An RNA of 177 nucleotides, treated with DMS and 2A3 and read out base by base. The RNA was probed in 150 mM KOAc, 10 mM MgCl2 and 150 mM bicine (pH 8.5) at 24 C. For DMS the reverse transcriptase was MarathonRT.

[RMDB]
RNA sequence: GGGAACGACUCGAGUAGAGUCGAAAAGCUGAACUCAAUAUCAGCGUGGUAAUGGCGAACAGGUAUUCCCCUUGUGCGUACAUUAAAACAACAAGGUAACCCACCAGCAGGCCGAGCAGACCUAGCACAUGCUAAUCCUCUUCGGAGGAUUAGCAUGAAAAGAAACAACAACAACAAC
Reactivity to DMS in 0.01 (KOAc 150mM, MgCl2 10mM, bicine 150mM(pH8.5), 24C), signal-to-noise 2, nucleotides 027 to 126: g050c000u000g000a040a040c170u000c150a120a120u000a100u000c010a060g010c020g050u000g010g000u020a030a050u000g000g020c020g000a030a000c010a000g000g000u000a220u000u000c030c030c010c010u000u000g000u000g030c030g010u010a090c090a060u000u000a040a110a110a040c060a070a050c110a070a070g000g020u000a090a150c070c030c000a060c100c060a120g040c020a030g010g010c040c020g000a050g000c060a060g010a090c010c010u000a020g030c060a190
Reactivity to 2A3 in 0.01 (KOAc 150mM, MgCl2 10mM, bicine 150mM(pH8.5), 24C), signal-to-noise 1, nucleotides 027 to 126: g000c000u000g010a040a030c020u080c220a070a040u160a060u160c020a010g020c040g030u040g070g030u140a070a070u040g040g000c020g020a020a010c030a010g000g000u060a110u100u120c030c010c010c020u050u110g020u030g050c030g040u060a090c040a110u110u090a020a060a020a030c100a000a000c070a070a040g070g000u000a050a040c030c000c020a000c030c000a030g000c040a020g030g000c010c010g000a040g010c010a010g030a040c010c000u010a010g030c010a010
Record summary: For 2A3, 1,187 sequencing reads were counted.